RNA sequence: GGGAACGACUCGAGUAGAGUCGAAAAACGGCACAUGCUAACAACAUUAACAGAUUUAAUGUUGCAAUCACUCGUGCCCAAAAAGGUAUUCUUUGUGUUAUGACAUCUCAGGCACUCUUUGAGUCCUCACUCAGUUAAAGUUCGCUUUAACUGAGUGAAAAGAAACAACAACAACAAC
Reactivity to 2A3 in 0.01 (KOAc 150mM, MgCl2 10mM, bicine 150mM(pH8.5), 24C), signal-to-noise 5, nucleotides 027 to 126: a000c020g010g000c000a000c000a020u050g010c030u080a070a030c000a010a000c000a020u020u020a020a020c040a120g270a290u080u030u010a010a000u010g000u000u010g010c040a020a060u060c020a020c060u090c070g000u010g000c000c000c000a040a100a010a030a010g080g010u090a060u090u050c030u050u080u060g040u010g030u090u120a180u140g040a030c040a170u070c060u000c060a000g030g000c040a000c030u040c030u070u090u150g040a040g030u030c010c000u010
Reactivity to DMS in 0.01 (KOAc 150mM, MgCl2 10mM, bicine 150mM(pH8.5), 24C), signal-to-noise 4, nucleotides 027 to 126: a100c240g000g030c020a000c010a100u010g000c060u000a150a180c000a020a010c010a000u000u010a010a050c230a210g000a200u020u010u000a000a000u000g000u000u000g010c040a060a100u010c050a030c300u000c150g040u000g010c000c000c150a030a040a030a070a010g000g000u010a070u020u010c030u000u000u000g000u010g010u000u000a090u010g000a080c150a060u000c120u000c040a030g010g020c080a020c030u010c040u000u010u000g000a040g010u000c030c050u000
The record gives the reactivity of an RNA of 177 nucleotides to 2A3 and DMS. For 2A3 the reverse transcriptase was SuperScript II with manganese. The data come from the RNA Mapping Database (RMDB), library 15KREP. For DMS the reverse transcriptase was MarathonRT. As a SHAPE reagent, 2A3 marks flexible, mostly unpaired nucleotides at the ribose 2'-OH. The RNA was probed in 150 mM KOAc, 10 mM MgCl2 and 150 mM bicine (pH 8.5) at 24 C.